[RMDB]
RNA sequence: GGGAACGACUCGAGUAGAGUCGAAAAUAGCGAAGUAGGAUUUUAUGCGUCAAGUGUUCACAGGCUGGGGAGUCGCCGUGAAACGAAAAGCAGAAAGCGUGCUGCUUACGAUAUAAUUUCCGCACGCAUAAGAAGUCUCUGUUCGCAGAGACUUCAACGGACAGUGUUUCUUCGGAAACACUGUCCGAAAAGAAACAACAACAACAAC
Reactivity to 2A3 in 0.01 (KOAc 150mM, MgCl2 10mM, bicine 150mM(pH8.5), 24C), signal-to-noise 2, nucleotides 027 to 156: u150a000g000c030g040a200a010g020u120a090g010g010a010u000u050u000u020a020u060g020c030g020u000c060a080a020g030u050g010u260u020c000a020c070a080g040g030c000u070g030g040g060g000a040g010u100c030g000c000c050g020u010g000a000a000a080c020g020a000a000a000a230g000c040a010g110a040a100a050g140c140g090u130g010c010u000g000c000u000u020a010c020g010a020u000a020u010a140a060u060u020u010c060c020g170c110a010c010g020c020a020u080a150a010g000a000a000g000u000c000u000c000u040g030u040u020c160g010c100a000g000a010g000a000c000u000u000c000a000a000
Background
Structure probing data (2A3) for a 207-nucleotide construct. For 2A3 the reverse transcriptase was SuperScript II with manganese. It was measured as part of the RMDB library M2RFPK. Reactivities are given for positions 27 through 156. The RNA was probed in 150 mM KOAc, 10 mM MgCl2 and 150 mM bicine (pH 8.5) at 24 C.